Structure probing data (DMS and 2A3) for a 177-nucleotide construct. The reactions ran in a buffer of 150 mM KOAc, 10 mM MgCl2 and 150 mM bicine (pH 8.5), at 24 C. The 2A3 profile rests on 1,673 reads. Reactivities are given for positions 27 through 126.
[RMDB]
RNA sequence: GGGAACGACUCGAGUAGAGUCGAAAAGCUUUCUUUCUUCCACUCACCCACUUCUCGAGAAUAUCUUCUCUUCCAUCGCGCUUCUUCUUCGAUUCGGAUCGGCUCAUCUCGACAAGAGGCGGCGGUCGAUACCACUUUGGUUCGCCAAAGUGGUAUCAAAAGAAACAACAACAACAAC
Reactivity to DMS in 0.01 (KOAc 150mM, MgCl2 10mM, bicine 150mM(pH8.5), 24C), signal-to-noise 1, nucleotides 027 to 126: g000c070u000u000u000c020u000u000u000c050u000u000c010c010a070c090u010c040a090c060c030c020a120c130u000u000c010u000c030g000a110g000a130a140u000a100u000c060u000u000c010u000c050u000u000c010c040a090u000c050g020c050g020c060u000u010c020u000u000c040u010u010c030g000a140u000u000c020g010g000a120u000c050g020g010c050u040c020a080u000c020u010c020g000a080c300a080a050g020a090g020g000c010g020g020c010g000g000u010c060
Reactivity to 2A3 in 0.01 (KOAc 150mM, MgCl2 10mM, bicine 150mM(pH8.5), 24C), signal-to-noise 2, nucleotides 027 to 126: g000c030u000u150u000c020u060u110u010c010u110u000c030c010a030c010u020c010a080c010c040c000a050c060u100u000c020u070c040g070a080g030a130a050u020a060u100c040u050u020c010u010c000u030u020c050c000a090u040c030g010c010g030c050u020u020c010u030u000c010u030u040c050g100a120u070u020c040g090g010a040u010c030g060g000c010u030c060a100u020c020u000c020g060a060c040a060a020g010a040g040g000c000g040g020c020g040g000u030c020